[RMDB]
RNA sequence: GGGAACGACUCGAGUAGAGUCGAAAACAGCCACAGCAGCCGCUUCUGAAUCUCCAGGGCACCAACUCAGCCUCCCUCCUCAACGGCUCCAUGCUGCAGAGAGCUUUGCUUUUACAGCAGUUGCAAGGUGAGUGACAUGGUUCGCCAUGUCACUCACAAAAGAAACAACAACAACAAC
Reactivity to 2A3 in 0.01 (KOAc 150mM, MgCl2 10mM, bicine 150mM(pH8.5), 24C), signal-to-noise 2, nucleotides 027 to 126: c020a020g120c000c000a050c060a010g020c000a030g040c070c020g020c000u140u040c020u020g050a110a060u030c030u000c110c080a040g020g000g050c000a040c040c020a090a150c020u020c070a020g020c000c010u050c000c000c020u050c020c000u110c000a100a100c100g000g000c020u000c040c000a100u070g000c030u000g020c110a070g040a000g000a000g050c000u180u050u290g000c000u000u030u120u040a030c020a050g010c010a010g010u050u010g030c080a090a010g060
Annotation: Chemical mapping of a 177-nucleotide RNA with 2A3. Source: RMDB library OK1LIB, as collected in RNAgym. The RNA was probed in 150 mM KOAc, 10 mM MgCl2 and 150 mM bicine (pH 8.5) at 24 C. 2A3 adducts were read by reverse transcription with SuperScript II with manganese.